[RMDB]
RNA sequence: GGGAACGACUCGAGUAGAGUCGAAAAGAAACGACGUAAAGCCUCUGAACGUCGCAGGCAGAAAUAUAGGAAACCUGAGGAAACAGGAACACGCCACGUAUGCCAUAAAAGAACUAGAGGCAAGAAAGAUAAUGCGUACGUUCGCGUACGCAUUAUCAAAAGAAACAACAACAACAAC
Reactivity to DMS in 0.01 (KOAc 150mM, MgCl2 10mM, bicine 150mM(pH8.5), 24C), signal-to-noise 2, nucleotides 027 to 126: g010a030a100a170c000g010a000c050g000u000a150a120a130g000c000c000u010c000u000g000a060a030c030g010u000c000g000c300a150g000g030c000a000g000a100a140a070u000a100u080a070g000g010a130a130a190c010c000u000g000a180g090g020a120a100a270c100a000g000g040a030a150c180a180c290g010c120c040a060c090g030u000a040u000g000c000c000a100u080a030a010a030a090g010a090a070c120u060a000g000a010g000g050c020a080a120g000a040a100a030
Reactivity to 2A3 in 0.01 (KOAc 150mM, MgCl2 10mM, bicine 150mM(pH8.5), 24C), signal-to-noise 5, nucleotides 027 to 126: g140a010a110a000c000g010a000c000g000u020a070a040a050g000c000c000u010c000u010g080a100a030c020g010u010c000g000c070a020g000g000c010a010g100a080a110a020u300a020u110a050g020g050a050a060a030c000c000u040g020a110g120g210a110a150a020c000a000g000g020a050a040c050a020c060g060c030c000a040c040g050u040a040u030g000c010c010a050u130a080a120a000a030g110a030a000c050u060a070g000a000g030g000c000a000a020g060a040a070a000